[RMDB]
RNA sequence: GGGAACGACUCGAGUAGAGUCGAAAAGAUAUGGACCGAUACGGGAGUCGGUAUUCGGAAACGAAUACCCGACUUUGAUCGUACCGGUCCUAAGUCAAACUAUUAGAAAGUUCGCUUUCUAAUAGAACUGAUUUAUAGAGUUCGCUCUAUAAAUCAGAAAAGAAACAACAACAACAAC
Reactivity to 2A3 in 0.01 (KOAc 150mM, MgCl2 10mM, bicine 150mM(pH8.5), 24C), signal-to-noise 3, nucleotides 027 to 126: g000a010u020a020u030g000g000a010c000c000g000a010u000a010c020g030g030g080a120g020u000c010g010g000u000a010u010u020c010g020g000a020a000a000c020g010a000a020u010a010c020c090c060g000a010c010u060u170u150g020a030u010c010g000u000a000c030c020g010g010u000c000c000u000a010a000g010u000c010a050a100a130c010u020a000u020u010a020g030a000a010a010g040u100u170c280g040c080u010u020u000c000u000a010a000u000a000g010a070a100
Reactivity to DMS in 0.01 (KOAc 150mM, MgCl2 10mM, bicine 150mM(pH8.5), 24C), signal-to-noise 4, nucleotides 027 to 126: g000a000u000a060u010g000g000a000c000c010g010a030u010a010c010g010g000g000a020g020u010c010g010g000u000a000u000u000c000g010g000a010a010a030c000g010a020a010u000a000c290c110c050g010a000c000u000u000u010g010a040u010c000g010u000a000c020c000g020g020u000c000c000u000a010a060g000u000c010a160a130a300c000u000a000u010u000a010g010a010a010a010g020u000u010c300g010c010u000u000u000c000u000a010a010u000a000g000a120a190